RNA sequence: GGGAACGACUCGAGUAGAGUCGAAAAAUGCGGGGGACUGACAUCACAAACGGGAGGAAAUGAGCAUUCCCGGGCAGGACAGACCAGCCAGCUGGCUGUCCAUCAGGCUGGGCUGGAAGGACCUUGGGUUCACAAUGGCUUUCGAGCCAUUGUGAACAAAAGAAACAACAACAACAAC
Reactivity to 2A3 in 0.01 (KOAc 150mM, MgCl2 10mM, bicine 150mM(pH8.5), 24C), signal-to-noise 2, nucleotides 027 to 126: a020u130g020c020g000g010g000g030g010a010c020u060g030a010c010a080u100c040a040c130a070a110a040c060g040g070g000a070g060g080a080a110a110u130g020a000g050c040a050u020u060c000c010c000g000g000g010c060a020g070g000a000c000a010g050a140c000c000a000g000c030c000a010g090c040u020g000g000c030u030g040u040c000c000a050u120c060a050g030g010c010u050g030g100g000c000u000g040g070a070a010g040g000a000c000c000u020u050g010g060
Reactivity to DMS in 0.01 (KOAc 150mM, MgCl2 10mM, bicine 150mM(pH8.5), 24C), signal-to-noise 2, nucleotides 027 to 126: a070u020g030c020g010g000g000g000g020a050c010u020g020a080c170a080u000c110a050c110a030a140a080c090g000g030g040a110g000g000a060a070a120u010g000a180g010c130a050u060u000c000c000c000g000g000g000c110a120g000g000a070c060a000g000a110c000c000a000g000c150c070a060g030c040u010g000g010c000u020g000u010c040c000a040u030c020a160g000g000c030u000g000g000g010c040u020g000g000a090a090g000g040a100c010c050u000u050g000g020